[RMDB]
RNA sequence: GGGAACGACUCGAGUAGAGUCGAAAAACCUGAUGAUUCGUCAUCAGGUCACAUGCCGCCCGAACGGCAUCCUGACCGGGCGGAUUCACUUUAAAUGGAGCACUGCUGCAUCAUUCGUGAUGCAGAAAGUAAUAGUAUUAUUCGUAAUACUAUUACUAAAAGAAACAACAACAACAAC
Reactivity to DMS in 0.01 (KOAc 150mM, MgCl2 10mM, bicine 150mM(pH8.5), 24C), signal-to-noise 9, nucleotides 027 to 126: a030c000c000u010g010a020u000g000a020u000u000c170g020u000c010a010u000c000a020g010g010u000c060a050c150a080u000g000c010c000g010c010c020c030g010a060a180c090g010g010c040a070u000c020c020u000g010a130c160c000g000g000g010c010g010g000a030u000u010c090a070c150u010u010u010a050a090a110u000g010g010a100g010c070a150c230u010g010c000u000g000c000a000u000c000a040u000u010c190g010u000g010a010u000g000c000a010g000a030a050
Reactivity to 2A3 in 0.01 (KOAc 150mM, MgCl2 10mM, bicine 150mM(pH8.5), 24C), signal-to-noise 9, nucleotides 027 to 126: a000c000c000u000g000a010u000g000a000u010u100c190g050u010c090a000u000c020a010g000g000u010c010a060c000a070u150g020c000c000g000c010c000c000g020a060a010c040g090g000c030a250u020c000c010u020g020a030c020c010g010g000g000c020g020g000a020u110u090c060a060c070u140u200u260a080a130a100u210g030g000a010g010c020a020c120u140g000c010u000g000c010a000u000c000a010u030u100c120g090u030g010a000u000g000c000a000g000a020a010
The data come from the RNA Mapping Database (RMDB), library M2PK50. Structure probing data (DMS and 2A3) for a 177-nucleotide construct. For DMS the reverse transcriptase was MarathonRT. The 2A3 profile rests on 44,907 reads.